[RMDB]
RNA sequence: GGGAACGACUCGAGUAGAGUCGAAAAUCGAGAGAUGGUUAGGGAAAUUAUCACACCUAUUAAAGGGGCUCUUGAUAUUAUGAAGAAAGCUGUGAGUCCUGACUUAGUCGGUGCUAGGAUAUUUGGCCAAUAUUACAGAGUUCGCUCUGUAAUAUUGAAAAGAAACAACAACAACAAC
Reactivity to DMS in 0.01 (KOAc 150mM, MgCl2 10mM, bicine 150mM(pH8.5), 24C), signal-to-noise 9, nucleotides 027 to 126: u000c030g010a150g010a130g010a050u000g010g010u000u010a070g010g010g000a080a080a080u000u000a040u000c050a250c060a060c010c010u000a040u000u000a030a040a140g000g010g010g010c010u000c010u000u000g000a050u010a060u010u010a230u010g010a110a140g010a090a090a110g010c050u000g010u000g000a030g010u000c010c010u000g000a100c170u000u000a030g010u000c060g000g010u000g000c150u010a070g010g000a040u000a050u000u000u000g010g000c150
Reactivity to 2A3 in 0.01 (KOAc 150mM, MgCl2 10mM, bicine 150mM(pH8.5), 24C), signal-to-noise 6, nucleotides 027 to 126: u060c000g000a000g010a000g010a080u090g060g020u080u070a070g070g010g000a050a100a190u130u050a060u100c010a010c010a010c050c010u010a020u040u090a040a030a020g030g000g010g000c010u010c010u030u040g030a030u040a090u230u170a100u170g060a030a140g090a150a120a020g060c060u050g050u050g150a000g000u000c000c000u010g030a040c030u050u040a010g030u050c030g020g000u010g040c050u080a060g050g030a030u030a040u120u110u090g030g000c020

Structure probing data (DMS and 2A3) for a 177-nucleotide construct. Values are in units of 0.01, from 0 to 300, in steps of 10. Conditions: 150 mM KOAc, 10 mM MgCl2 and 150 mM bicine (pH 8.5), 24 C. Values cover nucleotides 27 to 126. The DMS profile rests on 26,322 reads. The data come from the RNA Mapping Database (RMDB), library OK2TRN.